This 177-nucleotide RNA was probed chemically with 2A3 and DMS. 2A3 is a SHAPE reagent: it acylates the 2'-hydroxyl of flexible nucleotides of all four kinds. The DMS profile rests on 1,224 reads. The data come from the RNA Mapping Database (RMDB), library OK2TST.
RNA sequence: GGGAACGACUCGAGUAGAGUCGAAAAAGCUCACAGUGGAUGGUAGCUGGGAAUACAGACCAUUUGUGCAUCAUUCCUAGAUUCUAUGUUCACCCGGACUCACCCUGCUCGGGAGAGACCUGGAUGAGCUGGUGACGUAUUUCGAUACGUCACCAGCAAAAGAAACAACAACAACAAC
Reactivity to 2A3 in 0.01 (KOAc 150mM, MgCl2 10mM, bicine 150mM(pH8.5), 24C), signal-to-noise 2, nucleotides 027 to 126: a010g060c010u000c010a090c040a020g020u030g050g030a020u060g040g050u050a020g030c020u040g020g070g050a080a010u110a080c040a000g110a120c010c000a050u140u160u120g110u050g010c080a090u070c000a030u090u060c000c000u020a060g050a110u200u050c080u070a100u140g050u000u000c010a000c000c020c000g000g000a030c020u010c000a030c000c030c010u080g130c100u090c160g020g000g000a010g000a000g000a020c020c020u010g140g000a140u060g000a020
Reactivity to DMS in 0.01 (KOAc 150mM, MgCl2 10mM, bicine 150mM(pH8.5), 24C), signal-to-noise 1, nucleotides 027 to 126: a090g000c030u000c020a070c140a080g030u020g000g000a060u010g010g030u000a040g010c020u000g010g010g030a020a070u000a130c080a100g000a130c070c040a130u000u010u010g020u010g010c190a040u000c100a080u000u000c000c010u000a030g010a080u000u000c070u000a030u020g030u000u000c020a020c020c020c020g010g030a200c010u010c010a090c020c000c020u000g000c290u010c230g010g020g000a050g000a020g010a070c020c000u000g000g000a150u010g000a010
The RNA was probed in 150 mM KOAc, 10 mM MgCl2 and 150 mM bicine (pH 8.5) at 24 C.